Overview
This 177-nucleotide RNA was probed chemically with DMS and 2A3. The RNA was probed in 150 mM KOAc, 10 mM MgCl2 and 150 mM bicine (pH 8.5) at 24 C. Values cover nucleotides 27 to 126. For DMS, 878 sequencing reads were counted. DMS adducts were read by reverse transcription with MarathonRT.
[RMDB]
RNA sequence: GGGAACGACUCGAGUAGAGUCGAAAACAGGAUCUGUGUAAGGCCAGGGUUCGUGAGCACUAGAUCAUGAGACGUAGAAAGAAAGAGCAAAGCGGGAGAACGUACGAUGAAGAUUCUCCUUCGAUCCGUGCAAUGCUCAGUUCGCUGAGCAUUGCACAAAAGAAACAACAACAACAAC
Reactivity to DMS in 0.01 (KOAc 150mM, MgCl2 10mM, bicine 150mM(pH8.5), 24C), signal-to-noise 1, nucleotides 027 to 126: c090a050g080g030a030u040c030u000g030u000g020u000a030a080g010g010c000c030a060g010g000g000u000u000c120g050u010g020a100g000c050a030c070u000a080g000a050u000c080a100u010g000a030g040a040c100g040u000a130g010a090a050a040g000a020a040a070g000a030g050c110a050a090a140g000c130g000g000g000a110g000a020a020c130g000u010a070c130g000a060u000g000a080a090g040a150u000u000c000u000c000c000u010u000c050g000a070u000c100c130
Reactivity to 2A3 in 0.01 (KOAc 150mM, MgCl2 10mM, bicine 150mM(pH8.5), 24C), signal-to-noise 1, nucleotides 027 to 126: c030a020g010g000a040u030c000u060g040u040g020u090a070a020g030g040c030c030a070g070g030g030u110u100c030g030u030g020a010g000c000a050c160u170a020g040a100u030c010a030u040g010a040g000a080c060g130u200a010g110a070a100a030g050a010a070a000g050a030g040c030a040a070a000g030c030g010g000g020a020g020a030a000c040g060u190a000c000g080a100u120g040a040a030g020a020u010u030c020u000c000c000u040u050c010g000a040u000c020c040